Record summary:
An RNA of 177 nucleotides, treated with 2A3 and DMS and read out base by base. For 2A3 the reverse transcriptase was SuperScript II with manganese. The DMS profile rests on 2,093 reads. For DMS the reverse transcriptase was MarathonRT. Reactivities are rounded to 0.1 and cut off at 0 and 3. Values cover nucleotides 27 to 126. It was measured as part of the RMDB library OK1LIB. The RNA was probed in 150 mM KOAc, 10 mM MgCl2 and 150 mM bicine (pH 8.5) at 24 C.
RNA sequence: GGGAACGACUCGAGUAGAGUCGAAAAAUACAUGCAGCGAAGGAUAACAUUGAUAUUUACAAAAAACAUUUCCAAGCAUCAACGAUUAAAAUGGACGCAAAGGUGAUGGCAUCUGUAUUUGUCAUUGCUACCUUGCCUCAUUCGUGAGGCAAGGUAGAAAAGAAACAACAACAACAAC
Reactivity to 2A3 in 0.01 (KOAc 150mM, MgCl2 10mM, bicine 150mM(pH8.5), 24C), signal-to-noise 4, nucleotides 027 to 126: a010u190a030c020a000u110g080c060a070g000c020g130a110a070g070g020a070u110a280a030c010a150u030u120g020a060u020a060u140u120u120a030c160a030a150a070a050a040a020c030a030u030u010u030c010c010a070a000g020c020a000u040c030a010a100c090g080a050u070u300a040a090a060a080u150g040g030a020c050g010c070a090a060a010g040g000u070g020a000u000g000g060c040a060u040c070u080g060u050a030u020u030u000g050u050c020a020u000u080g030
Reactivity to DMS in 0.01 (KOAc 150mM, MgCl2 10mM, bicine 150mM(pH8.5), 24C), signal-to-noise 2, nucleotides 027 to 126: a020u000a090c090a090u000g000c000a120g040c070g020a140a020g030g030a060u060a070a200c060a010u020u000g000a020u000a030u000u060u000a150c050a000a040a020a070a200a060c170a090u000u000u000c020c030a180a270g030c080a030u000c000a030a010c100g020a160u010u020a020a020a050a110u000g020g000a000c080g010c050a000a060a130g040g010u010g010a020u000g010g010c030a070u010c130u020g000u000a000u020u000u000g010u010c000a070u000u050g000